[RMDB]
Structure probing data (2A3 and DMS) for a 177-nucleotide construct. The data come from the RNA Mapping Database (RMDB), library OK1LIB. The DMS profile rests on 5,563 reads.
RNA sequence: GGGAACGACUCGAGUAGAGUCGAAAAUAAUCAAGAUGAAUCGUUUUUAGUUUGCUUGCUUACCUUACGGGCCAGUAUGAGAUCUACUUGAAUCUUUUUAUGUAGGCAGAUAGCGACGGAAUUUAAAAUUUUAGGGUACUUUCGAGUACCCUAAAAUAAAAGAAACAACAACAACAAC
Reactivity to 2A3 in 0.01 (KOAc 150mM, MgCl2 10mM, bicine 150mM(pH8.5), 24C), signal-to-noise 3, nucleotides 027 to 126: u170a010a070u110c060a030a010g090a100u160g090a090a100u080c060g060u050u020u030u040u070a140g040u060u070u160g000c010u020u030g010c000u000u020a070c020c010u060u060a020c050g030g000g000c050c030a000g010u020a050u120g070a050g010a030u000c010u050a070c030u110u080g020a070a050u050c010u030u160u020u000u000a080u100g040u010a000g000g000c000a000g010a150u080a040g010c010g020a030c020g060g070a040a040u080u140u190a110a300a040
Reactivity to DMS in 0.01 (KOAc 150mM, MgCl2 10mM, bicine 150mM(pH8.5), 24C), signal-to-noise 3, nucleotides 027 to 126: u030a090a100u020c050a040a050g010a080u010g010a070a070u010c040g010u010u010u010u030u010a110g010u000u000u010g010c020u010u000g010c030u010u000a030c070c050u000u010a090c070g010g000g000c060c050a080g010u010a030u020g000a070g000a030u000c050u010a080c090u020u000g000a060a080u010c020u000u000u000u010u030a060u020g000u010a050g000g000c040a070g010a080u000a030g010c050g000a020c050g000g000a030a020u000u010u010a030a060a070